RNA sequence: GGGAACGACUCGAGUAGAGUCGAAAAGUGGUCCUGGGGGAGCCGCCGCCUGUAGUGGUGUGGGAGAAGGGCGGGCAGCAGCUGGCGGCCUCGGAACGCCUGAGCUUCCCGGCGGACGGCGCGGAGCACAUAUGGGGCUUUUCGAAGCCCCAUAUGUAAAAGAAACAACAACAACAAC
Reactivity to DMS in 0.01 (KOAc 150mM, MgCl2 10mM, bicine 150mM(pH8.5), 24C), signal-to-noise 1, nucleotides 027 to 126: g020u010g020g010u010c030c030u020g000g040g000g010g000a250g000c000c020g040c020c040g010c040c000u020g010u000a070g010u000g020g010u010g000u010g020g010g010a060g010a100a300g000g000g040c050g030g000g030c040a070g030c050a110g030c090u010g050g030c010g020g000c040c020u010c150g020g000a110a100c060g020c020c000u000g020a230g000c030u010u000c000c030c030g000g010c000g000g000a080c070g010g010c020g020c120g010g010a140g010c130